[RMDB]
RNA sequence: GGGAACGACUCGAGUAGAGUCGAAAACUAAGCGCAUGCUGUAGGGAAAAUGGCCCGAUAGGCUUGUGCAGUGCAGGGGCGCCGUGAUCCUUCAGUUUGUGAAAAGUGCUGAAUCUGCAAAGCGUAUGAAGCAGAGCGCAGUGACACGUGGUGCGGAGCGUCAUAAUGCAUUCGUGCAUUAUGACGCAAAAGAAACAACAACAACAAC
Reactivity to 2A3 in 0.01 (KOAc 150mM, MgCl2 10mM, bicine 150mM(pH8.5), 24C), signal-to-noise 3, nucleotides 027 to 156: c020u040a100a010g040c000g010c020a020u060g010c040u060g090u150a070g000g010g070a030a120a090a130u080g130g000c000c030c010g110a160u080a080g150g010c060u040u080g080u070g090c090a020g010u060g040c040a040g000g040g010g040c070g030c050c020g050u030g040a070u040c010c000u000u000c020a030g000u030u110u070g060u030g020a090a050a060a070g050u070g040c000u010g010a060a050u020c000u010g000c000a060a080a120g050c020g040u150a050u300g120a090a030g020c020a000g000a010g020c070g020c030a010g010u060g070a010c000a000c070g090u130g000g020u050g030c020g010g060a050
Reactivity to DMS in 0.01 (KOAc 150mM, MgCl2 10mM, bicine 150mM(pH8.5), 24C), signal-to-noise 2, nucleotides 027 to 156: c080u010a110a120g020c020g020c000a040u000g040c000u000g000u010a190g040g020g000a020a130a160a140u020g010g000c000c010c030g000a150u000a070g010g040c010u000u010g040u000g050c060a300g010u000g010c090a130g020g030g040g000c020g080c000c070g020u010g000a210u010c010c030u010u000c040a080g020u000u000u030g000u000g010a060a060a120a150g020u000g010c040u000g000a070a130u010c030u000g010c010a090a150a100g030c090g020u000a110u000g010a100a200g010c010a020g000a130g020c110g060c030a070g030u010g010a110c020a050c070g040u000g000g010u010g000c030g060g020a200
Source information:
The data come from the RNA Mapping Database (RMDB), library OK3TST. Chemical mapping of a 207-nucleotide RNA with 2A3 and DMS. 2A3 adducts were read by reverse transcription with SuperScript II with manganese. For DMS the reverse transcriptase was MarathonRT. The reactions ran in a buffer of 150 mM KOAc, 10 mM MgCl2 and 150 mM bicine (pH 8.5), at 24 C. For 2A3, 1,825 sequencing reads were counted. The DMS profile rests on 2,708 reads.